[RMDB]
This 170-nucleotide RNA was probed chemically with 2A3 and DMS. The reactions ran in a buffer of 150 mM KOAc, 10 mM MgCl2 and 150 mM bicine (pH 8.5), at 24 C.
RNA sequence: GGGAACGACUCGAGUAGAGUCGAAAAAGCAGCUCCCGGACCCCCUUCCAAAGAGACCGGGGGGGAGUUUGGAGCGCGGGGGGGACCGUCGGGUCCGUGGGAUGCCCUUCCCGAUUCCGUCCAUCCCAAAACCAAUGGUUCGCCAUUGGUAAAAGAAACAACAACAACAAC
Reactivity to 2A3 in 0.01 (KOAc 150mM, MgCl2 10mM, bicine 150mM(pH8.5), 24C), signal-to-noise 9, nucleotides 027 to 129: a000g020c090a020g000c010u050c010c020c000g010g040a040c010c010c000c000c010u080u120c060c030a140a170a050g240a070g050a110c090c120g000g000g000g000g000g000g000a110g030u030u050u050g010g000a010g010c010g000c030g020g000g000g000g000g000g000a010c020c010g140u210c110g110g020g010u000c020c020g040u080g000g000g000a030u090g020c000c000c000u030u040c010c000c010g020a090u180u060c060c040g080u030c030c000a040u020c010c000c000a030a060a000
Reactivity to DMS in 0.01 (KOAc 150mM, MgCl2 10mM, bicine 150mM(pH8.5), 24C), signal-to-noise 6, nucleotides 027 to 129: a060g000c020a100g030c050u020c020c010c060g060g010a070c020c000c010c020c010u020u050c040c020a040a080a070g040a140g000a110c190c110g000g020g010g020g000g000g000a020g020u000u000u010g000g000a000g050c040g000c010g000g000g000g000g000g000g000a000c000c030g060u080c130g010g000g010u030c010c020g060u040g020g010g010a070u030g000c020c010c020u000u000c010c010c000g020a100u030u020c070c110g040u060c050c040a050u030c010c040c030a030a030a080